The record gives the reactivity of an RNA of 177 nucleotides to 2A3 and DMS.
2A3 adducts were read by reverse transcription with SuperScript II with manganese.
For DMS the reverse transcriptase was MarathonRT.
The DMS profile rests on 4,775 reads.
RNA sequence: GGGAACGACUCGAGUAGAGUCGAAAACGGCUUCUGAUACUACCGCCGGGGCCUCGGCCAUAACCCACCAGACGGCUCGGCACCGCCGCCUGCUCUUUACCUACCCGGAUGGCUCUAAGGUAUUUGCUCCUCUUAUACUGUUCGCAGUAUAAGAGGAAAAAGAAACAACAACAACAAC
Reactivity to 2A3 in 0.01 (KOAc 150mM, MgCl2 10mM, bicine 150mM(pH8.5), 24C), signal-to-noise 2, nucleotides 027 to 126: c010g040g010c010u070u000c050u210g050a120u060a220c040u060a100c080c050g000c010c040g010g020g000g040c000c030u050c040g020g000c000c000a030u060a090a110c020c000c020a030c040c020a030g030a100c020g030g000c000u000c030g050g020c020a020c020c020g040c000c000g030c000c000u040g010c000u030c000u070u090u080a060c000c010u030a050c000c010c000g000g110a080u030g010g000c010u000c030u070a060a050g080g010u040a160u040u120u070g060c020
Reactivity to DMS in 0.01 (KOAc 150mM, MgCl2 10mM, bicine 150mM(pH8.5), 24C), signal-to-noise 5, nucleotides 027 to 126: c090g010g010c020u000u010c050u010g010a160u000a070c090u010a100c070c080g010c050c060g010g030g010g010c020c030u010c110g000g010c070c030a080u010a070a110c080c020c020a120c150c070a070g010a080c060g020g010c030u000c070g020g020c040a040c080c070g010c030c030g020c030c010u010g010c060u000c030u010u000u000a080c050c020u000a130c080c010c010g000g000a100u000g020g010c030u000c050u010a090a090g010g010u000a080u000u000u010g010c180